[RMDB]
RNA sequence: GGGAACGACUCGAGUAGAGUCGAAAACAGAGCUAAUGAGCCACAUACCUACCCAAGGUGAAAGCUCCUUCUCUCGCAAUGUGUAACUCAUGAUUCUCAUGACCCCUGGUUGGAGAGAUCCGGACGAUAGACUAGAGGGUGUUCGCACCCUCUAGAAGGUUUACUGAUAGUUCGCUAUCAGUAAACCAAAAGAAACAACAACAACAAC
Reactivity to DMS in 0.01 (KOAc 150mM, MgCl2 10mM, bicine 150mM(pH8.5), 24C), signal-to-noise 2, nucleotides 027 to 156: c050a090g000a100g000c040u000a120a100u020g010a070g040c010c020a090c060a130u000a060c040c020u000a100c050c030c030a160a050g010g010u010g030a080a130a050g000c060u000c030c040u000u010c010u000c010u000c030g030c030a090a070u010g030u010g030u000a030a060c010u020c020a030u000g010a130u000u010c080u000c000a090u000g000a180c030c010c010c040u000g040g030u010u000g000g000a070g020a110g000a040u000c010c010g020g020a100c030g000a140u010a140g010a160c020u000a000g020a050g030g030g030u010g020u000u000c300g040c010a030c010c010c010u000c000u000a000g000a040a070
Reactivity to 2A3 in 0.01 (KOAc 150mM, MgCl2 10mM, bicine 150mM(pH8.5), 24C), signal-to-noise 4, nucleotides 027 to 156: c070a030g070a020g020c020u110a120a070u150g060a050g040c060c010a050c030a070u230a050c020c020u040a050c010c020c020a040a030g000g000u040g070a090a060a020g010c050u030c010c020u040u030c030u010c010u010c030g070c140a060a080u070g070u050g040u150a060a040c010u010c030a010u030g040a120u300u080c120u030c100a030u040g030a070c000c000c010c040u070g090g000u090u050g020g010a020g000a010g000a040u030c040c040g000g030a020c030g030a080u120a120g110a030c000u000a000g000a000g000g020g000u010g030u050u020c060g030c030a000c000c000c020u010c000u000a000g000a000a000
Chemical mapping of a 207-nucleotide RNA with DMS and 2A3. The RNA was probed in 150 mM KOAc, 10 mM MgCl2 and 150 mM bicine (pH 8.5) at 24 C. The 2A3 profile rests on 2,535 reads.